[RMDB]
Description
Source: RMDB library M2PK50, as collected in RNAgym. The record gives the reactivity of an RNA of 177 nucleotides to DMS and 2A3. 2A3 adducts were read by reverse transcription with SuperScript II with manganese.

RNA sequence: GGGAACGACUCGAGUAGAGUCGAAAAACAUUAAGUUUCGACUUAAUGUAAACCCGUUGAAGCGGCACAUACGGAGCUUCAUACAUCUAAGAGUGCAAAUAAAAAGUUGAUCCUUCGGGAUCAACAAUCUAAAUCUUCCUUUCGAGGAAGAUUUAGAAAAAGAAACAACAACAACAAC
Reactivity to DMS in 0.01 (KOAc 150mM, MgCl2 10mM, bicine 150mM(pH8.5), 24C), signal-to-noise 3, nucleotides 027 to 126: a030c000a000u000u000a000a000g010u010u000u010c180g000a030c000u000u000a000a000u000g000u000a020a110a090c010c000c000g030u000u000g000a050a020g010c020g020g000c040a030c040a110u000a080c070g010g010a180g010c010u000u000c020a030u010a030c100a070u010c130u010a090a110g020a080g000u000g010c010a140a090a090u010a060a050a100a110a090g010u000u000g010a000u000c000c000u000u020c200g020g010g000a000u000c000a010a000c020a070a060
Reactivity to 2A3 in 0.01 (KOAc 150mM, MgCl2 10mM, bicine 150mM(pH8.5), 24C), signal-to-noise 4, nucleotides 027 to 126: a010c010a010u010u000a010a000g020u030u040u160c160g040a010c000u000u010a000a010u000g000u010a070a020a010c010c000c000g010u030u050g010a020a010g020c050g040g020c090a030c000a060u260a060c140g200g040a030g010c010u010u010c010a030u090a040c060a080u080c060u150a150a030g090a040g090u040g040c010a020a070a060u160a050a090a030a020a030g000u000u010g000a000u000c010c020u020u100c300g050g000g000a000u010c000a000a000c000a000a000
Reactivities are given for positions 27 through 126.